[RMDB]
Record summary
Structure probing data (2A3 and DMS) for a 207-nucleotide construct. 2A3 adducts were read by reverse transcription with SuperScript II with manganese. Values cover nucleotides 27 to 156. For DMS the reverse transcriptase was MarathonRT. It was measured as part of the RMDB library M2RFPK.
RNA sequence: GGGAACGACUCGAGUAGAGUCGAAAAGCAACGCAAAGCCGCGGCAAGUGGAGUUAGCGAGAAGAGACUAGGCUUUGGUUUCUUAAAGUGAAGCGGUCACCAAUCAGGUGUGGUAGUUACCGUAAAAAUAACCGCUCUUUGUUCGCAAAGAGCGGAAGAUUACAUAUUCGUUCGCGAAUAUGUAAUCAAAAGAAACAACAACAACAAC
Reactivity to 2A3 in 0.01 (KOAc 150mM, MgCl2 10mM, bicine 150mM(pH8.5), 24C), signal-to-noise 6, nucleotides 027 to 156: g040c020a030a030c060g010c100a050a050a000g030c020c010g020c030g060g030c070a070a070g040u080g060g070a100g040u110u130a050g050c050g040a040g040a090a050g040a010g010a020c040u060a040g030g020c000u040u050u050g030g000u010u030u020c010u030u100a100a100a060g060u070g110a100a010g010c000g010g020u020c020a000c000c010a040a080u150c050a040g090g040u090g020u040g090g020u050a060g020u070u080a010c010c010g010u040a060a080a020a020a010u110a040a060c000c000g000c010u000c000u010u010u010g020u020u040c090g000c120a000a000a000g000a000g000c010g000g000a000a000
Reactivity to DMS in 0.01 (KOAc 150mM, MgCl2 10mM, bicine 150mM(pH8.5), 24C), signal-to-noise 3, nucleotides 027 to 156: g030c030a050a070c000g010c030a050a080a110g030c040c020g020c050g000g020c070a090a100g030u010g000g030a140g030u000u010a070g020c030g010a160g000a110a090g000a110g000a040c010u000a070g060g030c050u000u000u000g010g020u000u000u020c010u000u000a030a080a140g000u010g020a100a180g020c020g010g010u000c050a060c040c020a040a140u020c120a090g000g020u000g000u000g030g020u010a060g000u000u000a040c020c010g020u000a000a070a070a060a130u010a130a110c000c000g010c000u000c000u010u000u000g010u010u000c300g030c030a020a020a020g000a020g020c000g010g000a000a010